[RMDB]
RNA sequence: GGGAACGACUCGAGUAGAGUCGAAAAGCCGAUCGGGUGCAAGCACCUCUGGAGUCAUCCGGCCCCAAAGGAGGAGAGUCCCGCCAGGGGUGAUCCACCCGGAGAUGAGCGGAGAAACCACAUCCAGAACGUAGAUUGUUCGCAAUCUACAAAAGAAACAACAACAACAAC
Reactivity to 2A3 in 0.01 (KOAc 150mM, MgCl2 10mM, bicine 150mM(pH8.5), 24C), signal-to-noise 9, nucleotides 027 to 129: g030c010c010g010a060u110c020g000g010g000u010g020c060a200a300g010c000a090c010c000u000c000u000g010g010a020g060u040c010a090u020c050c030g260g040c070c000c010c040a060a120a040g070g020a030g020g010a040g010a030g050u060c040c040c030g040c010c000a000g010g000g000g000u000g000a010u000c010c000a000c000c010c000g000g000a030g000a050u130g030a020g040c040g010g020a060g090a120a070a010c020c020a050c010a070u060c040c020a050g030a090a020c030
Reactivity to DMS in 0.01 (KOAc 150mM, MgCl2 10mM, bicine 150mM(pH8.5), 24C), signal-to-noise 9, nucleotides 027 to 129: g020c000c070g000a100u050c040g000g030g020u020g040c090a090a200g030c030a000c010c010u000c010u000g020g020a070g040u030c060a100u000c030c030g010g020c020c000c020c080a060a120a200g000g000a290g000g010a070g000a100g000u030c020c000c060g040c000c000a010g010g000g010g010u000g010a030u020c200c010a020c010c010c000g000g000a040g020a060u060g000a060g030c000g010g010a060g050a110a090a110c040c030a070c070a080u010c070c090a090g030a090a100c170

The record gives the reactivity of an RNA of 170 nucleotides to 2A3 and DMS. The 2A3 profile rests on 87,689 reads. The data come from the RNA Mapping Database (RMDB), library 15KLIB. For 2A3 the reverse transcriptase was SuperScript II with manganese. For DMS the reverse transcriptase was MarathonRT. Conditions: 150 mM KOAc, 10 mM MgCl2 and 150 mM bicine (pH 8.5), 24 C. For DMS, 64,126 sequencing reads were counted.